[RMDB]
RNA sequence: GGGAACGACUCGAGUAGAGUCGAAAAGAUAUGGACUCCGAACUACUCGGAUAACAGCGAAGAACCUUGUAUAAUUCGGAAACGAAUUAUACAAGGGGAGCUGCUAAUACGAGCGGAGUCCUAAGUCGACAUUUACAAGGUUCGCCUUGUAAAUGUCAAAAGAAACAACAACAACAAC
Reactivity to 2A3 in 0.01 (KOAc 150mM, MgCl2 10mM, bicine 150mM(pH8.5), 24C), signal-to-noise 2, nucleotides 027 to 126: g050a050u110a080u200g000g000a000c010u000c010c010g010a070a020c070u140a060c000u300c000g000g000a020u040a060a000c000a000g010c000g220a300a050g040a130a070c000c000u010u030g000u000a020u010a000a020u000u020c010g000g050a020a100a030c010g000a010a000u020u000a020u020a000c010a000a000g000g000g020g000a010g000c000u000g000c010u060a060a020u300a250c000g020a010g010c000g000g000a000g010u000c000c000u010a020a000g030u030c100
Reactivity to DMS in 0.01 (KOAc 150mM, MgCl2 10mM, bicine 150mM(pH8.5), 24C), signal-to-noise 2, nucleotides 027 to 126: g030a110u000a300u000g000g000a010c000u000c000c000g000a050a040c070u040a300c000u000c000g020g010a100u010a110a100c000a010g020c000g030a080a150g010a140a290c000c000u000u000g000u000a020u000a030a000u000u000c000g000g000a170a090a250c000g000a000a000u000u000a000u000a000c000a010a000g030g000g020g000a080g000c000u020g000c000u000a080a030u010a090c010g000a030g010c000g000g000a000g000u000c000c010u000a000a030g010u000c060

This 177-nucleotide RNA was probed chemically with 2A3 and DMS.